About this RNA:
This 170-nucleotide RNA was probed chemically with DMS and 2A3. High DMS reactivity at an A or C suggests that its Watson-Crick edge is free.

[RMDB]
RNA sequence: GGGAACGACUCGAGUAGAGUCGAAAAUCUACAAGGCUUAAAAGCUUGUUGUUACGUGGGUGUGCAAACUGUUGAAGAUCUGCGUGCUCGCAUGACAUAUGUAUGCCAGUGUGGUGGUGAACGUCAUUAACGGAUUAGUUCGCUAAUCCGAAAAGAAACAACAACAACAAC
Reactivity to DMS in 0.01 (KOAc 150mM, MgCl2 10mM, bicine 150mM(pH8.5), 24C), signal-to-noise 8, nucleotides 027 to 129: u030c040u010a030c080a080a050g020g010c040u000u000a060a080a110a100g020c030u000u000g000u020u020g000u000u000a060c120g040u030g000g000g070u030g030u030g030c000a010a020a030c070u040g000u070u060g030a170a060g010a130u040c090u000g000c020g000u000g000c010u030c030g000c040a100u030g010a040c030a070u010a010u000g000u050a080u030g000c000c030a050g000u000g010u040g000g040u050g010g020u040g000a040a060c100g030u000c060a100u010u010a080a220
Reactivity to 2A3 in 0.01 (KOAc 150mM, MgCl2 10mM, bicine 150mM(pH8.5), 24C), signal-to-noise 9, nucleotides 027 to 129: u050c000u000a070c040a080a020g050g040c040u150u300a050a080a020a030g030c000u020u050g020u020u030g010u000u060a030c060g000u040g000g010g000u030g020u020g010c010a020a050a070c040u070g080u170u200g110a110a050g030a170u050c020u020g000c000g020u030g030c000u000c000g000c010a010u040g010a000c000a020u140a030u110g090u080a030u180g030c010c000a030g030u050g030u030g140g050u000g010g030u050g050a060a040c010g040u030c060a080u080u070a060a030

Record summary
The RNA was probed in 150 mM KOAc, 10 mM MgCl2 and 150 mM bicine (pH 8.5) at 24 C.